An RNA of 177 nucleotides, treated with DMS and 2A3 and read out base by base.
The data come from the RNA Mapping Database (RMDB), library OK1LIB.
The DMS profile rests on 1,172 reads.
The RNA was probed in 150 mM KOAc, 10 mM MgCl2 and 150 mM bicine (pH 8.5) at 24 C.
For DMS the reverse transcriptase was MarathonRT.

[RMDB]
RNA sequence: GGGAACGACUCGAGUAGAGUCGAAAAAGCCUGGCAUGCACUGUUCACUUGGGUUUAAUUCAAGUGUAAAGGAGGACAUGCUCUCUUCACGUUAACUUAAUCUAGGUACUCCAGUGAUUCUCCCCAGGUUGUUGAUCGUUUUCGAACGAUCAACAACAAAAGAAACAACAACAACAAC
Reactivity to DMS in 0.01 (KOAc 150mM, MgCl2 10mM, bicine 150mM(pH8.5), 24C), signal-to-noise 1, nucleotides 027 to 126: a040g030c010c000u010g000g000c020a070u020g040c120a060c000u010g000u020u000c050a020c000u000u080g000g000g020u030u000u050a060a030u000u000c060a010a000g000u000g060u000a000a080a080g000g010a100g000g020a300c130a000u000g030c000u000c070u000c060u000u000c060a040c000g020u020u020a000a120c110u040u060a060a100u020c040u060a050g060g000u030a050c100u060c060c000a070g000u010g020a160u010u000c020u000c000c000c000c090a140g000
Reactivity to 2A3 in 0.01 (KOAc 150mM, MgCl2 10mM, bicine 150mM(pH8.5), 24C), signal-to-noise 4, nucleotides 027 to 126: a000g040c000c000u000g010g040c020a000u030g030c010a010c040u050g140u150u050c000a000c010u010u000g020g050g050u080u190u250a150a150u130u070c010a020a000g000u000g050u110a060a050a000g140g020a030g030g040a080c030a060u120g010c030u000c000u000c010u040u090c110a100c080g070u080u140a120a060c000u060u080a100a090u100c070u050a060g050g020u020a030c020u000c000c000a030g000u030g040a090u060u000c010u030c030c000c000c010a030g090